An RNA of 177 nucleotides, treated with DMS and 2A3 and read out base by base. Reactivities are rounded to 0.1 and cut off at 0 and 3. Source: RMDB library OK1LIB, as collected in RNAgym. The 2A3 profile rests on 744 reads. The reactions ran in a buffer of 150 mM KOAc, 10 mM MgCl2 and 150 mM bicine (pH 8.5), at 24 C.

RNA sequence: GGGAACGACUCGAGUAGAGUCGAAAAAGUGACGAUUCCAGGUUCCGACAACGAAUACUACAAAGUGUCGCUGGAUACCGCGACCUAUGUGCCUAUCGAUAACGAUCACAAGUGGGUGGUUCUGGGGAUUUAGGUGGGUCUUCGGACCCACCUAAAUAAAAGAAACAACAACAACAAC
Reactivity to DMS in 0.01 (KOAc 150mM, MgCl2 10mM, bicine 150mM(pH8.5), 24C), signal-to-noise 2, nucleotides 027 to 126: a090g020u030g010a090c000g020a120u010u010c020c020a040g010g010u000u010c250c040g040a090c060a070a150c100g000a180a070u020a050c070u020a100c120a120a060a050g030u060g000u000c000g000c020u020g020g010a060u040a110c040c070g000c010g000a010c020c020u000a040u000g010u000g040c090c060u000a010u040c040g010a090u010a040a100c110g000a030u000c010a040c070a110a080g000u000g010g010g040u010g010g010u010u000c030u000g020g030g010g000
Reactivity to 2A3 in 0.01 (KOAc 150mM, MgCl2 10mM, bicine 150mM(pH8.5), 24C), signal-to-noise 2, nucleotides 027 to 126: a000g110u130g020a100c070g000a150u050u010c020c000a010g000g010u070u070c050c030g030a010c020a100a020c050g020a100a100u100a100c030u020a010c020a080a160a050g090u100g000u030c000g020c020u000g060g000a130u130a100c060c050g040c030g040a050c000c000u060a060u110g010u030g020c060c050u020a050u170c000g040a050u050a130a140c020g000a050u140c020a010c000a080a080g000u150g070g000g000u020g030g080u000u210c060u080g010g000g000g010